[RMDB]
The record gives the reactivity of an RNA of 177 nucleotides to DMS.
RNA sequence: GGGAACGACUCGAGUAGAGUCGAAAAUUCAAGCGAUUCGUCGCUUGAACCUGAGGAGACUCAACCAAAAUUGUUCCCUUUUGCUUUUGCUUUCCUCUUUUAAGUAGUAGUGCUUCGGCACUACUAAUUCUGGUUGGUAAUUCGUUACCAACCAGAAAAAAGAAACAACAACAACAAC
Reactivity to DMS in 0.01 (KOAc 150mM, MgCl2 10mM, bicine 150mM(pH8.5), 24C), signal-to-noise 1, nucleotides 027 to 126: u000u010c000a000a000g010c000g010a010u000u020c250g010u000c000g010c010u020u000g020a010a080c090c050u010g000a060g000g000a190g000a040c000u000c040a040a040c140c020a030a040a030a060u010u000g000u000u000c000c000c000u000u000u000u000g010c180u000u020u000u020g010c070u000u010u000c030c010u000c010u050u000u000u040a110a150g010u000a010g020u000a010g020u000g010c000u000u020c190g010g010c000a000c000u020a000c000u000a010a070

For DMS the reverse transcriptase was MarathonRT.